[RMDB]
RNA sequence: GGGAACGACUCGAGUAGAGUCGAAAACGGGAUAGCUUCGGCUAUCCCGAAAGAGCUAGCAAGGUUCCGCUAGCAAAGAAAUGAAAAGGAACCAAAAGAAAAAAAGUAAGGGGUUCGCCCCUUACAAGAUACUACUUGAGUUCGCUCAAGUAGUAUCAAAAGAAACAACAACAACAAC
Reactivity to 2A3 in 0.01 (KOAc 150mM, MgCl2 10mM, bicine 150mM(pH8.5), 24C), signal-to-noise 2, nucleotides 027 to 126: c010g000g000g010a000u000a010g010c000u030u030c190g050g000c000u010a000u000c000c010c010g000a000a000a010g010a000g000c000u020a000g000c030a230a190g010g010u000u000c000c000g000c000u000a000g000c000a050a060a030g020a020a120a010u260g050a030a040a010a050g000g000a000a000c010c020a010a020a050a090g060a000a140a000a020a000a030a010g000u010a000a010g030g010g010g000u040u070c120g090c010c000c000c000u000u000a000c000a010a000
Reactivity to DMS in 0.01 (KOAc 150mM, MgCl2 10mM, bicine 150mM(pH8.5), 24C), signal-to-noise 2, nucleotides 027 to 126: c020g050g030g000a000u000a000g010c000u010u040c190g010g000c000u000a010u000c000c000c000g020a000a040a110g000a170g000c000u010a000g000c010a150a070g030g030u000u000c000c000g000c000u000a000g000c000a040a090a090g000a090a170a040u030g000a050a010a010a110g030g000a000a030c000c000a110a070a140a160g010a010a010a060a060a090a130a170g000u000a000a000g020g000g010g020u000u000c270g030c010c000c010c000u000u000a000c000a050a050
This 177-nucleotide RNA was probed chemically with 2A3 and DMS. The DMS profile rests on 1,459 reads. For 2A3 the reverse transcriptase was SuperScript II with manganese. DMS adducts were read by reverse transcription with MarathonRT. Conditions: 150 mM KOAc, 10 mM MgCl2 and 150 mM bicine (pH 8.5), 24 C.